[RMDB]
RNA sequence: GGGAACGACUCGAGUAGAGUCGAAAAACAAAGCAUGGCUAGAUGAUGCCACCGCGGAUAGAGCUGAGGUACUCUAGACUUCUAGCCAGAAGAAUUCCCAAACCGCGGAGAGUGCUCUCGCAAAAAAGAUAACAAAACACUUCGGUGUUUUGUUAUCAAAAGAAACAACAACAACAAC
Reactivity to 2A3 in 0.01 (KOAc 150mM, MgCl2 10mM, bicine 150mM(pH8.5), 24C), signal-to-noise 2, nucleotides 027 to 126: a000c090a030a150a020g100c050a060u050g010g000c000u000a000g000a030u090g040a090u160g070c060c020a010c010c000g010c010g010g030a070u130a120g140a010g030c170u190g060a010g050g080u020a020c000u030c010u020a070g070a190c000u020u000c000u000a000g000c030c000a000g000a020a010g010a010a020u050u020c000c000c000a030a050a010c000c010g000c000g060g000a020g030a010g000u010g010c030u060c010u030c120g020c030a040a150a010a010a010a030
Reactivity to DMS in 0.01 (KOAc 150mM, MgCl2 10mM, bicine 150mM(pH8.5), 24C), signal-to-noise 2, nucleotides 027 to 126: a040c150a130a140a120g000c050a150u000g000g010c000u010a040g020a040u000g010a110u000g030c110c060a260c030c020g020c010g010g030a270u000a090g030a030g000c100u010g020a060g000g020u000a020c040u000c000u000a060g000a180c040u000u000c000u000a010g030c010c020a050g000a060a130g000a080a150u000u000c000c000c000a050a120a120c020c030g020c010g020g000a090g000a090g010u000g000c040u000c010u000c050g020c220a000a030a060a100a080a080
The data come from the RNA Mapping Database (RMDB), library M2PK90. The record gives the reactivity of an RNA of 177 nucleotides to 2A3 and DMS. Conditions: 150 mM KOAc, 10 mM MgCl2 and 150 mM bicine (pH 8.5), 24 C. The DMS profile rests on 1,267 reads.